Overview
Structure probing data (2A3 and DMS) for a 207-nucleotide construct. For 2A3, 1,985 sequencing reads were counted. Reactivities are given for positions 27 through 156. The reactions ran in a buffer of 150 mM KOAc, 10 mM MgCl2 and 150 mM bicine (pH 8.5), at 24 C. DMS adducts were read by reverse transcription with MarathonRT. 2A3 adducts were read by reverse transcription with SuperScript II with manganese.
RNA sequence: GGGAACGACUCGAGUAGAGUCGAAAAAAUAUGAUGUAGAUGCAAAUAAAUUACAGGAGGCGUUGAACAAAUGAGUAAGUUCAAAAAAGGUGACCAUUUGGUUCCAACAGCAAUGAGCGGUCUUGAUAUGGAGGUUAUUAUUUUUGAGGAAAUUAGCGUGUUAUCAAUGUUUCGACAUUGAUAACACAAAAGAAACAACAACAACAAC
Reactivity to 2A3 in 0.01 (KOAc 150mM, MgCl2 10mM, bicine 150mM(pH8.5), 24C), signal-to-noise 2, nucleotides 027 to 156: a000a000u230a060u090g010a040u070g020u030a020g030a050u050g010c010a020a080a060u160a080a080a050u200u110a120c050a080g040g030a050g000g010c040g030u050u050g040a030a010c030a010a070a040u060g020a030g050u080a130a070g030u040u060c080a120a110a000a000a000a000g050g010u030g010a010c010c010a030u030u090u090g040g000u100u050c020c040a040a010c010a050g040c010a030a060u060g010a010g020c030g020g030u000c000u010u060g010a010u030a060u130g030g010a010g030g010u000u020a020u040u030a070u020u140u030u050u070g030a030g000g030a040a070a030u080u050a080g090c050
Reactivity to DMS in 0.01 (KOAc 150mM, MgCl2 10mM, bicine 150mM(pH8.5), 24C), signal-to-noise 1, nucleotides 027 to 156: a100a070u000a060u000g010a080u000g020u000a070g010a130u010g000c040a020a090a050u010a070a080a080u010u000a080c040a050g000g000a110g030g070c090g020u000u030g000a050a050c030a080a070a010u000g020a150g040u000a090a100g040u010u010c040a010a040a150a060a080a080g030g030u020g000a030c030c030a140u000u000u040g030g000u000u000c060c050a020a040c060a050g010c030a010a070u010g020a070g040c060g020g010u010c000u000u000g010a070u010a050u010g020g010a070g020g010u020u000a040u000u000a070u020u000u000u000u010g010a090g020g010a040a040a150u010u010a070g010c160